The data come from the RNA Mapping Database (RMDB), library TTRDES. The record gives the reactivity of an RNA of 177 nucleotides to 2A3 and DMS.

RNA sequence: GGGAACGACUCGAGUAGAGUCGAAAAGAUAUGGACGUGAUACCUUCUUUGAUCUUAAUCGGAAACGAUUAAGGGAGAAGUGUAUACGUCCUAAGUCAAAGCAGAGCACCGUUCGCGGUGCUCUGCACACCGUUAUAAAGUUCGCUUUAUAACGGUGAAAAGAAACAACAACAACAAC
Reactivity to 2A3 in 0.01 (KOAc 150mM, MgCl2 10mM, bicine 150mM(pH8.5), 24C), signal-to-noise 6, nucleotides 027 to 126: g030a030u060a050u160g010g000a000c020g030u160g240a030u030a040c020c020u050u030c020u300u300u110g100a120u060c000u000u000a010a000u000c000g060g000a120a040a060c010g010a010u020u000a010a000g000g010g000a010g000a020a010g040u100g010u170a030u010a010c000g000u020c000c000u010a070a020g020u020c050a160a060a010g030c000a010g020a010g040c020a010c040c020g120u220u240c300g020c040g170g000u000g000c010u010c000u000g000c000a000
Reactivity to DMS in 0.01 (KOAc 150mM, MgCl2 10mM, bicine 150mM(pH8.5), 24C), signal-to-noise 5, nucleotides 027 to 126: g010a060u010a300u000g010g000a010c000g020u000g000a030u000a020c010c010u000u000c000u000u000u020g000a080u010c000u000u000a000a000u010c000g010g000a160a130a200c000g010a010u000u000a000a010g000g010g000a010g010a020a010g000u010g030u010a010u000a020c000g010u000c000c000u000a020a060g010u000c050a110a140a130g010c020a010g010a030g010c000a010c000c000g060u010u010c280g020c020g030g000u000g000c000u000c010u000g010c000a060
DMS adducts were read by reverse transcription with MarathonRT. The reactions ran in a buffer of 150 mM KOAc, 10 mM MgCl2 and 150 mM bicine (pH 8.5), at 24 C.